This 177-nucleotide RNA was probed chemically with 2A3 and DMS. The RNA was probed in 150 mM KOAc, 10 mM MgCl2 and 150 mM bicine (pH 8.5) at 24 C.

[RMDB]
RNA sequence: GGGAACGACUCGAGUAGAGUCGAAAAAGACUUGUAUUCGUACAAGUCUACAGAAAUUUCGCUAGCACACGAUCACACCUAGGGUUCUCAAUAACGAUCGAACAACGUGUCAAUUCGUUGACACGAAUUCAUACACAUUCUUCGGAAUGUGUAUGAAAAAAGAAACAACAACAACAAC
Reactivity to 2A3 in 0.01 (KOAc 150mM, MgCl2 10mM, bicine 150mM(pH8.5), 24C), signal-to-noise 5, nucleotides 027 to 126: a010g000a000c000u000u000g010u000a020u020u100c220g020u030a000c000a010a000g000u000c000u000a000c010a040g210a040a170a060u040u050u040c020g000c060u020a010g000c050a040c000a010c120g030a020u010c000a030c010a020c080c010u020a020g050g000g000u020u020c020u000c000a030a080u130a090a040c080g030a050u060c030g060a070a020c040a030a040c010g000u000g000u000c000a010a020u060u060c200g060u060u010g000a000c000a000c000g000a000a020
Reactivity to DMS in 0.01 (KOAc 150mM, MgCl2 10mM, bicine 150mM(pH8.5), 24C), signal-to-noise 6, nucleotides 027 to 126: a010g010a010c000u000u000g010u000a010u000u020c200g030u000a010c000a010a020g000u000c000u000a080c150a100g000a060a060a150u000u000u000c040g010c040u000a040g010c130a070c110a060c060g000a030u000c010a040c120a080c110c010u010a040g000g020g010u000u000c010u000c010a070a050u010a060a090c160g000a040u000c060g000a090a070c200a080a150c010g010u010g000u000c000a010a040u010u010c180g000u010u000g000a010c010a000c000g000a050a050